[RMDB]
The record gives the reactivity of an RNA of 207 nucleotides to DMS and 2A3. 2A3 is a SHAPE reagent: it acylates the 2'-hydroxyl of flexible nucleotides of all four kinds. DMS adducts were read by reverse transcription with MarathonRT. Conditions: 150 mM KOAc, 10 mM MgCl2 and 150 mM bicine (pH 8.5), 24 C. For 2A3, 1,079 sequencing reads were counted. It was measured as part of the RMDB library OK3TST. The DMS profile rests on 1,325 reads. Values are in units of 0.01, from 0 to 300, in steps of 10.
RNA sequence: GGGAACGACUCGAGUAGAGUCGAAAAACUAAGACCUACAUUCUCUCAGGUUCAAGGCACAUGAAAAUAAACAGUCCUAGAAAAAAAUGUAAGCAAAACCUUACCGAGAUUUGUUGGGUUGAAUACUCAUGCCUGAGACAACCAAUGUGAUAGCACCCACCGGAAAUGUAUUCGUACAUUUCCGGUGAAAAGAAACAACAACAACAAC
Reactivity to DMS in 0.01 (KOAc 150mM, MgCl2 10mM, bicine 150mM(pH8.5), 24C), signal-to-noise 1, nucleotides 027 to 156: a150c090u000a140a110g010a140c000c020u010a130c020a120u010u000c030u000c010u030c020a040g040g050u010u010c050a080a100g050g000c090a090c140a090u000g000a140a060a060a200u000a070a090a130c120a060g010u000c010c000u000a240g000a030a000a060a300a030a210a030u000g030u000a000a010g000c110a160a090a030a070c070c050u040u000a040c030c100g000a150g000a170u030u000u040g020u000u010g010g060g070u000u010g010a070a130u000a140c090u010c010a120u000g000c020c030u000g000a090g030a100c030a030a050c020c050a010a080u000g000u000g010a090u010a080g030c010a030c030c030
Reactivity to 2A3 in 0.01 (KOAc 150mM, MgCl2 10mM, bicine 150mM(pH8.5), 24C), signal-to-noise 2, nucleotides 027 to 156: a000c080u060a020a020g060a080c000c010u030a020c020a090u100u010c010u010c010u000c040a020g040g000u090u120c090a030a040g080g040c060a070c010a060u070g080a080a110a120a140u190a070a230a050c070a040g070u020c030c020u100a080g150a070a120a010a010a010a010a030u080g000u050a050a020g010c020a020a130a050a140c010c000u040u030a000c020c050g030a020g030a160u020u020u110g080u050u080g030g000g000u000u010g000a030a000u060a090c010u010c030a030u100g040c000c010u040g000a020g020a090c040a060a070c000c020a060a070u090g030u010g050a050u210a030g020c050a060c200c020